RNA sequence: GGGAACGACUCGAGUAGAGUCGAAAAGGAGGAGAGCAGCGGAUCCUCCGAAUUGGGCAUCAUCUGGGAUUGCAAGCCCAAGCCAGGCAAAUAGUAGAGAUCGAUGAUGUUCUCGCCCUGCUGCUCAAUACUCCUGACUGUUCGCAGUCAGGAGUAUAAAAGAAACAACAACAACAAC
Reactivity to 2A3 in 0.01 (KOAc 150mM, MgCl2 10mM, bicine 150mM(pH8.5), 24C), signal-to-noise 4, nucleotides 027 to 126: g000g000a000g000g010a040g010a010g060c000a000g000c030g070g040a090u040c000c000u000c000c000g010a000a070u070u080g010g000g000c000a010u000c000a010u000c090u100g060g050g070a030u050u090g050c090a100a080g000c000c000c030a030a010g080c030c030a020g000g030c020a050a140a080u150a100g140u030a040g040a010g000a090u090c020g020a030u020g010a010u030g050u020u020c030u060c070g020c000c000c000u030g000c000u000g000c000u000c000a010
Reactivity to DMS in 0.01 (KOAc 150mM, MgCl2 10mM, bicine 150mM(pH8.5), 24C), signal-to-noise 2, nucleotides 027 to 126: g000g000a020g000g000a070g000a030g050c000a010g010c030g020g020a090u010c000c010u010c000c010g000a040a020u000u040g010g010g000c000a040u010c010a030u010c030u020g030g000g000a170u020u030g040c140a140a190g000c010c000c070a040a090g000c150c130a090g000g000c080a100a100a100u040a210g000u010a120g000a030g000a170u050c030g000a030u020g000a030u000g030u010u000c000u010c100g000c040c040c030u000g010c000u000g020c010u000c050a090
Chemical mapping of a 177-nucleotide RNA with 2A3 and DMS. The DMS profile rests on 5,907 reads.